[RMDB]
RNA sequence: GGGAACGACUCGAGUAGAGUCGAAAACGAGCCAGGUCUCGUAUCACGCUGUGGUGGAUGACCGGAACAACGGCGAGUUGCUCGACCGGCCCGAGGACGGUGCCCAAUGAGCGGCGACCUCGACCGGCCUUCAGGUCUUCUUCGGAAGACCUGAAGGAAAAGAAACAACAACAACAAC
Reactivity to DMS in 0.01 (KOAc 150mM, MgCl2 10mM, bicine 150mM(pH8.5), 24C), signal-to-noise 2, nucleotides 027 to 126: c020g000a300g010c000c070a190g000g010u000c000u000c040g040u000a040u000c010a070c000g000c210u000g000u000g000g020u000g000g040a050u000g010a050c030c020g000g010a070a070c150a090a110c130g000g010c060g000a230g000u000u000g010c040u000c050g020a180c040c010g000g000c030c040c040g000a010g020g070a140c020g030g000u000g000c020c010c090a100a140u000g000a170g010c020g040g000c020g010a080c020c020u000c030g000a080c010c000g000g000
Reactivity to 2A3 in 0.01 (KOAc 150mM, MgCl2 10mM, bicine 150mM(pH8.5), 24C), signal-to-noise 1, nucleotides 027 to 126: c010g020a030g000c010c020a130g020g000u000c010u020c020g110u070a000u050c020a000c030g300c160u300g040u050g000g040u010g000g070a100u150g020a030c020c000g020g080a060a040c140a060a000c020g050g000c010g010a000g050u030u060g020c040u000c040g030a060c040c010g020g010c050c220c000g010a020g000g080a020c060g020g300u080g000c010c010c040a050a210u280g040a010g040c030g060g000c030g010a060c020c000u060c020g030a050c020c000g000g000
Record summary
The data come from the RNA Mapping Database (RMDB), library OK2TRN. This 177-nucleotide RNA was probed chemically with DMS and 2A3. The 2A3 profile rests on 1,033 reads. The RNA was probed in 150 mM KOAc, 10 mM MgCl2 and 150 mM bicine (pH 8.5) at 24 C. DMS adducts were read by reverse transcription with MarathonRT.